[RMDB]
RNA sequence: GGGAACGACUCGAGUAGAGUCGAAAAGCUUAGCAGUUCGCUGCUAAGCGACGUUGACGGCCCUCACCGUUGACAAAUCCCAAUGUGGACAGGUGACUGACAGAUAUUAAGCGUUCGCGCUUAAUAAGUAAAGAAAUGUUUUCGAACAUUUCUUUACAAAAGAAACAACAACAACAAC
Reactivity to 2A3 in 0.01 (KOAc 150mM, MgCl2 10mM, bicine 150mM(pH8.5), 24C), signal-to-noise 5, nucleotides 027 to 126: g010c010u000u000a000g010c000a010g010u050u150c190g060c130u000g000c010u000a000a000g000c000g010a010c040g010u010u010g010a010c010g010g020c030c110c010u060c040a040c000c010g010u000u020g010a000c000a010a090a020u030c030c000c010a020a090u300g040u100g050g050a060c020a030g030g040u050g040a050c020u020g020a020c010a040g120a050u040a010u070u010a000a000g000c010g030u040u110c270g000c000g000c090u000u000a010a000u020a030a010
Reactivity to DMS in 0.01 (KOAc 150mM, MgCl2 10mM, bicine 150mM(pH8.5), 24C), signal-to-noise 7, nucleotides 027 to 126: g000c000u000u000a000g020c000a010g010u010u010c240g020c010u000g010c000u000a000a010g000c000g010a030c180g000u000u000g000a020c000g000g000c070c100c130u010c180a230c000c000g010u000u010g010a010c010a090a100a130u000c010c000c010a130a080u020g010u000g000g000a090c040a030g010g000u010g000a120c040u000g000a110c080a060g010a270u000a010u000u000a000a010g000c000g020u000u010c230g020c020g010c000u000u000a000a000u000a010a090